[RMDB]
An RNA of 177 nucleotides, treated with 2A3 and DMS and read out base by base. For 2A3 the reverse transcriptase was SuperScript II with manganese. For DMS, 2,258 sequencing reads were counted. DMS adducts were read by reverse transcription with MarathonRT. The 2A3 profile rests on 2,887 reads. The data come from the RNA Mapping Database (RMDB), library OK2TRN. The RNA was probed in 150 mM KOAc, 10 mM MgCl2 and 150 mM bicine (pH 8.5) at 24 C.
RNA sequence: GGGAACGACUCGAGUAGAGUCGAAAACUUCGCGAUUCCAGAGGAAAACGGACGAGGAACAGUUCCAUGCCGAGCGUCCUCAGUUCGGCCGACCUCUGCGUAAUGCCAAGGUCAACGAGGGAGCUCCGUUAUAGACCGCAUUCGUGCGGUCUAUAACAAAAGAAACAACAACAACAAC
Reactivity to 2A3 in 0.01 (KOAc 150mM, MgCl2 10mM, bicine 150mM(pH8.5), 24C), signal-to-noise 2, nucleotides 027 to 126: c020u070u030c030g000c030g130a080u080u040c010c010a010g010a020g020g000a030a050a020a050c020g000g010a010c020g010a010g030g030a110a090c040a100g000u030u000c020c020a120u230g170c200c060g010a010g000c020g030u010c000c010u010c000a020g010u020u010c010g010g030c070c010g030a020c010c000u000c000u020g010c000g020u090a030a030u070g030c030c010a030a030g030g020u090c030a020a040c060g000a060g010g030g010a020g010c020u000c060c010
Reactivity to DMS in 0.01 (KOAc 150mM, MgCl2 10mM, bicine 150mM(pH8.5), 24C), signal-to-noise 3, nucleotides 027 to 126: c050u000u000c150g010c050g020a220u010u000c040c030a050g010a040g000g010a050a090a110a090c030g010g010a040c010g010a030g000g000a040a050c100a200g010u000u000c020c020a140u010g040c170c160g010a010g010c030g000u000c000c000u000c010a090g020u010u010c010g010g020c170c100g010a300c000c000u000c000u000g020c170g000u000a050a050u000g020c030c090a040a070g000g010u000c050a090a070c070g000a060g000g000g000a090g020c040u000c060c130